This 177-nucleotide RNA was probed chemically with DMS. For DMS the reverse transcriptase was MarathonRT. Conditions: 150 mM KOAc, 10 mM MgCl2 and 150 mM bicine (pH 8.5), 24 C. Reactivities are given for positions 27 through 126.
RNA sequence: GGGAACGACUCGAGUAGAGUCGAAAAUGGUGGUGCGGUGCAGGAAGUCGGUGCGGGCACACCGGAUUUCGCGGUGUGCCCGUGCGACCUUGGUCUUGGCUUUGCGGCGGUUGUUCGAGCCCUUCUGGAUAGCAAUAGAGUUCGCUCUAUUGCUAUCAAAAGAAACAACAACAACAAC
Reactivity to DMS in 0.01 (KOAc 150mM, MgCl2 10mM, bicine 150mM(pH8.5), 24C), signal-to-noise 2, nucleotides 027 to 126: u010g010g020u010g010g030u010g020c040g020g020u010g030c070a060g000g010a100a090g020u000c020g040g020u000g030c030g000g010g000c000a030c000a010c010c000g000g010a250u000u010u010c180g010c010g020g000u000g020u000g010c000c000c000g020u000g010c000g010a030c040c080u000u000g010g000u000c040u000u000g000g010c050u000u010u000g000c090g000g000c070g000g010u000u000g010u000u010c050g010a140g000c020c020c060u000u010c050u000g000